This 177-nucleotide RNA was probed chemically with 2A3 and DMS. Source: RMDB library TTRDEL, as collected in RNAgym. High DMS reactivity at an A or C suggests that its Watson-Crick edge is free. DMS adducts were read by reverse transcription with MarathonRT. For DMS, 1,641 sequencing reads were counted. The reactions ran in a buffer of 150 mM KOAc, 10 mM MgCl2 and 150 mM bicine (pH 8.5), at 24 C.
RNA sequence: GGGAACGACUCGAGUAGAGUCGAAAAGAUAUGGAGGCACUCCCCACCGAACUACGUCUGGUGUCGGAAACGACACUCUAAGACGCGAGGUGCCUCCUAAGUCAAAAGCGUCGGUUCGCCGACGCAAGUAACGCUAGGAGUUCGCUCCUAGCGUUACAAAAGAAACAACAACAACAAC
Reactivity to 2A3 in 0.01 (KOAc 150mM, MgCl2 10mM, bicine 150mM(pH8.5), 24C), signal-to-noise 2, nucleotides 027 to 126: g030a020u090a010u110g000g000a000g010g000c010a000c050u190c000c000c090c020a140c090c080g080a180a150c140u170a100c240g000u020c010u040g040g000u010g030u000c010g000g020a010a010a030c010g000a000c000a010c000u020c010u040a090a040g010a010c040g040c020g150a030g000g090u000g000c010c010u000c000c000u000a020a000g020u000c030a000a000a130a110g010c000g000u000c000g000g140u080u150c300g030c150c000g010a000c000g020c000a000a010
Reactivity to DMS in 0.01 (KOAc 150mM, MgCl2 10mM, bicine 150mM(pH8.5), 24C), signal-to-noise 2, nucleotides 027 to 126: g000a010u010a070u020g000g000a000g010g000c040a040c010u000c040c040c110c170a230c220c090g010a060a090c120u000a270c010g000u030c000u000g000g020u000g000u010c000g010g010a000a010a000c000g000a020c000a010c000u010c300u000a090a060g010a000c000g010c090g000a030g000g000u000g000c010c020u000c000c000u020a010a060g010u010c060a070a130a090a090g000c000g000u000c000g000g000u000u000c250g000c000c000g000a000c000g020c010a010a020